[RMDB]
RNA sequence: GGGAACGACUCGAGUAGAGUCGAAAAGUCAACUGCGACGGCCGGUCCCCGGCCUAGUUUCGCGUCGAAUUCACGGAGCAGUGCGUACUGGCACCGGGCGGCGGCUGCGAGAUCCGAAGCACUGUAGAGGCAACGUAGAUUUCGAUCUACGUUGCCUAAAAGAAACAACAACAACAAC
Reactivity to DMS in 0.01 (KOAc 150mM, MgCl2 10mM, bicine 150mM(pH8.5), 24C), signal-to-noise 1, nucleotides 027 to 126: g020u000c030a030a090c090u000g030c020g000a100c260g000g000c000c000g010g000u000c070c010c010c000g050g000c300c010u000a020g010u000u010u000c030g030c020g000u000c060g000a060a080u030u010c120a070c050g000g000a130g000c020a040g000u000g010c060g010u020a160c090u000g000g030c040a050c000c050g020g000g000c130g010g000c010g000g000c070u000g000c040g020a020g000a070u020c090c040g000a120a130g000c010a070c150u000g000u000a150g010

About this RNA: An RNA of 177 nucleotides, treated with DMS and read out base by base. Values cover nucleotides 27 to 126. The RNA was probed in 150 mM KOAc, 10 mM MgCl2 and 150 mM bicine (pH 8.5) at 24 C. In probing experiments dimethyl sulfate is read out at A N1 and C N3, which are open when not base-paired.